[RMDB]
RNA sequence: GGGAACGACUCGAGUAGAGUCGAAAAAAAAGUCACUUUUACGGUUGGCCAUUUGUCUCUUACGUUGCAUUUAUCAAUCUGCUUUUUGAUACAGCAGCACCUCGCUGCUGCUUUUUUAUUUGAAAAACAUUCCGUUAUAGUUCGCUAUAACGGAAUGAAAAGAAACAACAACAACAAC
Reactivity to DMS in 0.01 (KOAc 150mM, MgCl2 10mM, bicine 150mM(pH8.5), 24C), signal-to-noise 2, nucleotides 027 to 126: a030a040a060a050g000u000c040a040c070u000u010u010u000a080c130g010g040u000u000g000g000c060c050a100u020u010u000g020u000c000u000c040u010u000a100c140g010u000u000g000c060a070u000u010u010a060u010c080a040a050u000c120u010g010c100u000u000u000u000u000g010a080u000a050c070a020g010c010a020g000c020a080c210c200u020c170g010c040u000g000c000u000g000c010u010u010u010u000u000u010a060u010u010u000g000a070a050a040a070a120
Structure probing data (DMS) for a 177-nucleotide construct. The data come from the RNA Mapping Database (RMDB), library RFMREP. For DMS, 1,696 sequencing reads were counted.